[RMDB]
RNA sequence: GGGAACGACUCGAGUAGAGUCGAAAAGGACUUUCGGCUUGAUCGUCCGAGAGGGGGCCAAGUGGCUUCGCUUUGAUCUUAAAAUUGCUGCUCCAAAGGGAAGACUUGAAGAGAGAAACACCUGUGACGAUAUUGUUAGCUUCGGCUAACAAUAUCGAAAAGAAACAACAACAACAAC
Reactivity to 2A3 in 0.01 (KOAc 150mM, MgCl2 10mM, bicine 150mM(pH8.5), 24C), signal-to-noise 5, nucleotides 027 to 126: g050g020a010c020u020u000u010c000g010g010c030u030u040g010a010u040c010g020u010c010c000g000a010g000a000g000g030g000g000g000c010c020a190a150g170u240g170g010c000u020u010c020g000c050u040u090u200g020a030u010c000u080u220a040a070a080a110u120u110g020c030u020g000c010u000c020c000a080a060a030g060g010g030a070a050g030a070c000u040u060g060a150a030g070a040g010a010g020a130a050a010c040a030c010c020u050g030u060g090a040
Reactivity to DMS in 0.01 (KOAc 150mM, MgCl2 10mM, bicine 150mM(pH8.5), 24C), signal-to-noise 3, nucleotides 027 to 126: g000g000a120c010u000u000u000c020g020g030c050u000u030g000a040u000c010g020u010c020c000g000a010g010a050g000g000g010g000g000c030c010a210a130g020u030g010g000c010u000u000c010g010c030u020u040u010g000a020u020c030u020u030a060a080a060a060u020u010g000c060u010g030c030u000c010c000a040a080a100g030g000g000a060a120g020a090c050u020u000g020a040a150g000a170g000a050g000a100a080a050c160a080c060c020u000g000u010g000a240
About this RNA
This 177-nucleotide RNA was probed chemically with 2A3 and DMS. The RNA was probed in 150 mM KOAc, 10 mM MgCl2 and 150 mM bicine (pH 8.5) at 24 C.